Conditions: 150 mM KOAc, 10 mM MgCl2 and 150 mM bicine (pH 8.5), 24 C. The record gives the reactivity of an RNA of 177 nucleotides to 2A3 and DMS. 2A3 adducts were read by reverse transcription with SuperScript II with manganese. For DMS the reverse transcriptase was MarathonRT. As a SHAPE reagent, 2A3 marks flexible, mostly unpaired nucleotides at the ribose 2'-OH.

RNA sequence: GGGAACGACUCGAGUAGAGUCGAAAACUGGGCCCUACAGGCCGCCUGGUACUCAUAGUAGCAAGAUUGUCCUUAGAACAUGAGCACGGCUGGCAGGCUGGGUGGAUGGGUGGCGCUGCCCAAGGGAAACCCUAUUCGAAUUCGUUCGAAUAGGGUUAAAAGAAACAACAACAACAAC
Reactivity to 2A3 in 0.01 (KOAc 150mM, MgCl2 10mM, bicine 150mM(pH8.5), 24C), signal-to-noise 2, nucleotides 027 to 126: c010u000g000g040g000c000c020c020u070a040c050a070g060g090c010c000g000c010c010u080g040g080u110a100c010u010c030a060u030a130g040u040a010g070c040a030a010g040a170u110u210g090u220c030c000u070u110a060g050a140a000c000a040u040g010a010g000c020a000c070g110g000c030u120g050g000c050a060g010g030c090u030g000g000g030u100g010g040a120u070g080g000g000u060g030g000c100g010c090u100g000c000c000c030a030a040g060g000g000a060
Reactivity to DMS in 0.01 (KOAc 150mM, MgCl2 10mM, bicine 150mM(pH8.5), 24C), signal-to-noise 5, nucleotides 027 to 126: c110u000g010g000g020c020c070c050u000a090c160a130g000g010c020c020g000c020c020u000g020g010u000a040c020u000c020a040u000a120g020u000a070g010c090a070a050g000a160u000u010g000u000c110c030u000u010a170g010a090a070c070a030u000g000a010g020c040a070c080g010g010c020u010g030g010c070a030g010g000c050u000g000g000g020u010g010g010a110u000g000g010g010u010g010g000c080g010c100u000g000c030c020c030a070a100g000g010g000a130